[RMDB]
RNA sequence: GGGAACGACUCGAGUAGAGUCGAAAAAUUCAUCAACACACUUAAUCUAACAAUAUCACUUCUAUGCUGAACCUUCAAACUCUCAAAGGUACUUGGUAUGUGCGAAUGAGGGACGUACUCGCGAAAGCCCUUUUCGUACUUUCGAGUACGAAAAGGGAAAAGAAACAACAACAACAAC
Reactivity to 2A3 in 0.01 (KOAc 150mM, MgCl2 10mM, bicine 150mM(pH8.5), 24C), signal-to-noise 3, nucleotides 027 to 126: a000u100u070c040a060u080c050a080a060c030a010c010a010c070u160u160a030a080u090c070u040a090a040c010a070a080u050a020u150c020a030c030u090u020c030u060a060u070g050c010u010g010a050a030c000c000u040u060c030a060a050a060c020u030c000u020c050a060a070a040g090g020u010a030c010u030u050g080g040u110a090u120g030u030g000c000g010a080a020u080g000a030g020g000g010a020c050g040u030a040c000u020c050g030c030g050a040a070a090g030
Reactivity to DMS in 0.01 (KOAc 150mM, MgCl2 10mM, bicine 150mM(pH8.5), 24C), signal-to-noise 2, nucleotides 027 to 126: a160u000u000c030a050u000c090a100a090c070a100c070a040c060u050u010a050a060u000c080u020a090a060c090a030a050u010a040u000c050a080c080u010u020c080u000a030u010g000c070u010g010a080a040c050c060u000u000c100a080a020a090c080u020c030u000c050a040a120a100g030g000u000a020c050u000u000g000g020u000a090u000g040u000g000c050g010a050a020u000g010a040g010g000g020a050c110g010u000a040c050u000c100g000c070g010a060a100a150g010